[RMDB]
RNA sequence: GGGAACGACUCGAGUAGAGUCGAAAACGGGACAACGAGGCGUUCAGGGAGGCGCUGCUGAAUAUCACCGAGCCCGAGGGCCGCUGGCUCCUGGACCUGGUGAACAUUCUGCAGAGCAUCGUGGUGCAGGAGCGCGGGCUGCCGCUGUCCGAGAAGCACCAGGAUGUAGUUUCGACUACAUCCUGGUAAAAGAAACAACAACAACAAC
Reactivity to 2A3 in 0.01 (KOAc 150mM, MgCl2 10mM, bicine 150mM(pH8.5), 24C), signal-to-noise 3, nucleotides 027 to 156: c070g020g030g030a030c020a070a010c080g050a040g040g000c010g020u070u090c040a090g040g050g000a050g010g000c060g000c070u040g010c010u030g050a100a040u110a050u130c020a020c030c010g000a020g030c000c000c000g060a130g010g000g010c130c030g110c280u100g100g010c000u040c010c000u010g000g020a030c000c010u010g000g000u000g000a090a070c040a070u150u110c020u130g000c060a030g020a020g090c000a020u020c040g140u100g020g010u110g050c020a010g020g010a030g000c030g010c020g020g030g010c020u040g020c000c000g040c040u040g050u000c010c010g050a070g000a040a010g030c050
Reactivity to DMS in 0.01 (KOAc 150mM, MgCl2 10mM, bicine 150mM(pH8.5), 24C), signal-to-noise 1, nucleotides 027 to 156: c070g030g040g000a120c030a030a190c080g020a080g030g010c040g050u000u010c010a210g030g050g070a140g020g050c040g020c020u000g010c000u010g000a020a080u000a100u000c030a070c050c020g000a140g000c000c010c020g030a120g020g010g000c000c020g040c090u020g070g040c000u020c000c010u000g020g010a020c020c000u000g000g000u000g000a090a040c050a100u000u000c050u000g010c070a080g020a070g000c010a020u000c050g000u000g000g020u000g020c040a090g040g010a010g000c060g040c020g020g020g030c040u010g040c020c000g070c030u000g020u000c000c020g000a140g020a140a170g020c150
An RNA of 207 nucleotides, treated with 2A3 and DMS and read out base by base. Conditions: 150 mM KOAc, 10 mM MgCl2 and 150 mM bicine (pH 8.5), 24 C. The DMS profile rests on 2,580 reads. Source: RMDB library OK3TST, as collected in RNAgym.